[RMDB]
RNA sequence: GGGAACGACUCGAGUAGAGUCGAAAAGACACAUGCUUGACAGUUAUUCUGUCAUGCUAUGUGGUGAUAAUUCUGCUAAGUUUUGGGAAGAGGCAUUCUAUAGAGAUCUCUAUAGUUCGCCUACCACGAUGACAAAAUUCUUCGGAAUUUUGUCAUCAAAAGAAACAACAACAACAAC
Reactivity to 2A3 in 0.01 (KOAc 150mM, MgCl2 10mM, bicine 150mM(pH8.5), 24C), signal-to-noise 1, nucleotides 027 to 126: g120a000c000a000c000a000u010g000c010u020u000g000a010c020a010g010u110u100a180u300u190c000u000g010u000c000a000u000g000c010u050a030u040g010u010g000g030u000g030a040u110a140a060u020u020c030u080g140c090u090a200a230g070u040u040u100u150g100g000g010a150a090g110a040g130g020c000a030u050u000c020u010a010u010a010g090a100g030a300u110c090u040c010u110a000u010a000g010u010u020c040g000c000c010u000a030c000c010a050c030
Reactivity to DMS in 0.01 (KOAc 150mM, MgCl2 10mM, bicine 150mM(pH8.5), 24C), signal-to-noise 1, nucleotides 027 to 126: g020a070c010a000c000a000u010g020c000u000u010g000a010c020a010g000u010u020a110u000u010c000u000g030u020c000a000u000g000c010u010a010u000g010u010g000g000u000g010a100u000a070a130u010u000c010u000g040c080u010a110a080g010u000u000u000u000g010g020g010a150a170g000a030g000g000c000a030u000u000c020u000a010u000a000g000a040g010a180u010c220u000c000u000a000u000a010g010u000u000c060g010c010c000u010a050c010c030a070c210